[RMDB]
RNA sequence: GGGAACGACUCGAGUAGAGUCGAAAACGUGCGCUCGAUCCAGGCCGCGAGCUCGCGCAGCGUCGCGCACCCGAGCACGUCGACGCGCGUCGCAUGCAUGCCGCCGCACGCGCGCACGACGUCGACACAUUAUGGGAGGAUUCGUCCUCCCAUAAUGAAAAGAAACAACAACAACAAC
Reactivity to DMS in 0.01 (KOAc 150mM, MgCl2 10mM, bicine 150mM(pH8.5), 24C), signal-to-noise 9, nucleotides 027 to 126: c070g020u000g010c070g010c010u000c030g010a110u010c090c100a180g010g010c220c100g020c040g000a090g010c040u010c070g010c080g010c070a080g010c030g010u000c040g010c030g020c060a140c030c030c020g000a090g020c130a080c050g000u000c000g000a140c010g010c010g000c010g010u000c100g020c020a070u010g010c020a110u010g010c090c110g020c060c300g010c050a040c020g000c050g000c010g010c020a040c010g010a040c030g000u000c040g010a110c130a230
Reactivity to 2A3 in 0.01 (KOAc 150mM, MgCl2 10mM, bicine 150mM(pH8.5), 24C), signal-to-noise 9, nucleotides 027 to 126: c020g010u030g000c030g010c010u020c030g070a130u100c080c050a070g050g040c040c020g050c040g030a060g030c060u070c050g090c020g010c110a030g010c010g120u100c020g000c000g000c020a050c010c020c010g030a050g050c090a020c070g020u020c010g010a010c010g010c000g000c010g020u030c080g010c020a070u170g020c000a030u180g120c050c060g030c020c020g010c010a020c000g000c000g000c010g000c020a080c050g010a010c010g010u020c010g030a010c010a000